[RMDB]
RNA sequence: GGGAACGACUCGAGUAGAGUCGAAAAAUUCAUUAAAUCCUAACGACCGGAGUCCUGUCUCUUUGUGUUCUUGGGGGACUUGAGUUAGCUGUCUUUCCUCUUAUUACAUUGGGCUAACGGGAGGAAACGUACGCUAUUAGUUCGCUAAUAGCGUACGAAAAGAAACAACAACAACAAC
Reactivity to DMS in 0.01 (KOAc 150mM, MgCl2 10mM, bicine 150mM(pH8.5), 24C), signal-to-noise 3, nucleotides 027 to 126: a060u010u040c040a060u020u030a100a060a110u000c020c000u000a050a120c140g000a090c030c040g000g000a040g000u010c070c090u040g000u020c020u010c010u000u010u020g030u030g010u010u020c130u020u010g000g000g000g010g000a070c070u000u020g000a100g010u000u010a090g010c060u000g000u000c060u000u000u000c000c000u000c030u000u010a170u000u040a030c080a140u030u030g010g000g000c120u000a030a030c120g010g020g000a040g000g010a020a030a050
Reactivity to 2A3 in 0.01 (KOAc 150mM, MgCl2 10mM, bicine 150mM(pH8.5), 24C), signal-to-noise 5, nucleotides 027 to 126: a010u070u030c030a010u070u190a090a050a100u070c020c020u040a080a040c060g060a050c010c030g060g020a010g060u040c010c000u080g070u100c030u020c020u070u130u110g130u040g030u080u000c010u070u050g030g000g000g000g010a010c000u040u090g010a020g060u040u070a040g030c020u040g010u040c000u010u020u000c010c000u000c010u050u030a050u060u020a040c040a080u090u160g070g030g010c030u020a050a050c020g010g010g000a020g010g000a020a030a010
Record summary
This 177-nucleotide RNA was probed chemically with DMS and 2A3. For 2A3 the reverse transcriptase was SuperScript II with manganese. The DMS profile rests on 6,356 reads. Reactivities are given for positions 27 through 126. The reactions ran in a buffer of 150 mM KOAc, 10 mM MgCl2 and 150 mM bicine (pH 8.5), at 24 C. Source: RMDB library OK1LIB, as collected in RNAgym.